[RMDB]
An RNA of 207 nucleotides, treated with 2A3 and DMS and read out base by base. For 2A3 the reverse transcriptase was SuperScript II with manganese. For 2A3, 851 sequencing reads were counted. The DMS profile rests on 1,670 reads.
RNA sequence: GGGAACGACUCGAGUAGAGUCGAAAACAAAGACAAACUUAGAAUAUUGUGUCCCUAAGAGCCAGUAUUUAGGAAAAAAAUUUCAUAAUUCGUAGAACAUUGAUUACAGAGCCAAGAAGCCUCUUGACUCAGAAAUGGUCUAUUCAACAAUGCUCUAUACUAAAUACCGUUUCGACGGUAUUUAGUAAAAAGAAACAACAACAACAAC
Reactivity to 2A3 in 0.01 (KOAc 150mM, MgCl2 10mM, bicine 150mM(pH8.5), 24C), signal-to-noise 2, nucleotides 027 to 156: c070a010a110a030g100a030c040a020a170a020c070u200u290a010g020a090a040u090a160u150u060g020u020g040u110c020c000c000u060a030a030g020a010g080c050c020a040g020u050a110u010u140u090a080g000g000a020a010a040a040a030a090a140u090u140u030c060a050u070a210a120u150u090c090g020u030a010g020a030a000c020a000u000u010g040a000u000u110a030c030a080g030a020g010c000c000a010a030g030a080a050g260c020c050u010c000u000u000g020a010c000u000c020a010g090a010a030a020u030g000g000u010c010u050a060u030u190c070a130a120c000a020a130u070g020c020u000c010u040a050
Reactivity to DMS in 0.01 (KOAc 150mM, MgCl2 10mM, bicine 150mM(pH8.5), 24C), signal-to-noise 1, nucleotides 027 to 156: c070a100a120a180g030a220c070a080a070a140c050u010u000a150g090a210a140u000a070u000u010g020u010g020u000c010c000c030u000a050a060g000a090g020c050c040a120g020u000a040u000u010u000a080g020g000a000a020a050a080a100a110a230u000u010u030c030a060u000a060a070u010u000c060g010u000a010g010a020a020c000a020u020u000g000a140u000u020a090c140a110g000a020g000c000c020a040a020g000a050a300g030c230c240u000c000u010u000g020a020c020u000c020a040g010a130a050a040u000g000g010u010c030u000a060u000u000c060a010a070c090a010a060u000g000c000u000c020u000a210
The RNA was probed in 150 mM KOAc, 10 mM MgCl2 and 150 mM bicine (pH 8.5) at 24 C. Values cover nucleotides 27 to 156.